[RMDB]
RNA sequence: GGGAACGACUCGAGUAGAGUCGAAAAGGAAGAGAAGGCUAGAUCUCCCGACCCAAGCUCCUAGCACGGAUACCGAGCACCCACGCGGAGCACAUGCCGCGGAAUAGGCAAAAGUGUUGCGGACCUGGAUCAAUUCGUAGUUCGCUACGAAUUGAUCAAAAGAAACAACAACAACAAC
Reactivity to 2A3 in 0.01 (KOAc 150mM, MgCl2 10mM, bicine 150mM(pH8.5), 24C), signal-to-noise 5, nucleotides 027 to 126: g060g010a070a190g020a020g030a120a010g080g000c020u040a020g000a170u000c010u010c020c000c000g020a040c010c000c010a020a040g050c020u050c010c020u030a010g010c010a010c030g030g000a040u040a120c010c010g010a000g000c000a010c000c010c000a020c020g020c010g010g010a020g080c060a020c010a120u170g020c000c010g000c020g000g060a070a110u180a100g050g000c030a040a060a060a030g030u030g010u050u070g030c000g020g020a030c000c020u030g050
Reactivity to DMS in 0.01 (KOAc 150mM, MgCl2 10mM, bicine 150mM(pH8.5), 24C), signal-to-noise 3, nucleotides 027 to 126: g010g020a090a030g000a040g010a040a120g000g010c030u010a060g000a150u000c020u000c010c020c000g020a110c000c000c010a040a120g000c140u020c080c000u000a090g010c020a040c080g010g000a100u000a050c100c010g000a050g030c030a070c060c030c040a140c020g000c010g010g000a090g000c130a050c200a100u030g030c000c000g000c030g000g030a060a080u100a100g000g010c160a090a070a070a110g050u010g020u000u000g020c060g000g000a130c170c040u020g000